Chemical mapping of a 177-nucleotide RNA with DMS and 2A3.
For DMS the reverse transcriptase was MarathonRT.
It was measured as part of the RMDB libraries RFM100 and RFMREP.
The RNA was probed in 150 mM KOAc, 10 mM MgCl2 and 150 mM bicine (pH 8.5) at 24 C.

RNA sequence: GGGAACGACUCGAGUAGAGUCGAAAAUAGCUGAGAGGAGGUGCAUGGCCGUCGUCAGUUCGUACCGUGAGGCGUCCUGUUAAGUCAGGCAACGAGCGAGACCCAUUUCCACUGUUGCUAACGACUCAUAGUGAAGUACAUUCGUGUACUUCACUAUAAAAGAAACAACAACAACAAC
Reactivity to DMS in 0.01 (KOAc 150mM, MgCl2 10mM, bicine 150mM(pH8.5), 24C), signal-to-noise 9, nucleotides 027 to 126: u020a060g010c020u000g000a090g010a070g010g010a070g000g020u010g000c090a070u010g010g020c040c050g020u000c050g020u000c060a090g020u000u010c070g020u010a130c050c030g010u010g000a130g000g010c130g000u010c010c010u000g010u010u010a080a110g010u010c020a060g000g010c140a060a040c040g010a100g010c050g000a080g000a100c070c030c040a130u000u010u010c020c020a100c090u010g000u000u000g000c040u020a060a120c090g000a080c100u010c120
Reactivity to 2A3 in 0.01 (KOAc 150mM, MgCl2 10mM, bicine 150mM(pH8.5), 24C), signal-to-noise 9, nucleotides 027 to 126: u090a010g040c050u040g040a040g010a030g120g030a030g010g020u050g030c070a060u090g040g000c040c020g050u050c020g070u040c010a030g010u060u050c030g020u030a080c030c020g020u050g040a060g010g040c020g050u120c000c000u000g030u060u100a120a120g190u050c020a010g010g000c010a030a010c030g020a020g030c020g010a030g040a080c020c010c020a050u040u050u010c030c020a060c040u060g030u100u030g030c040u040a070a030c040g040a020c020u010c070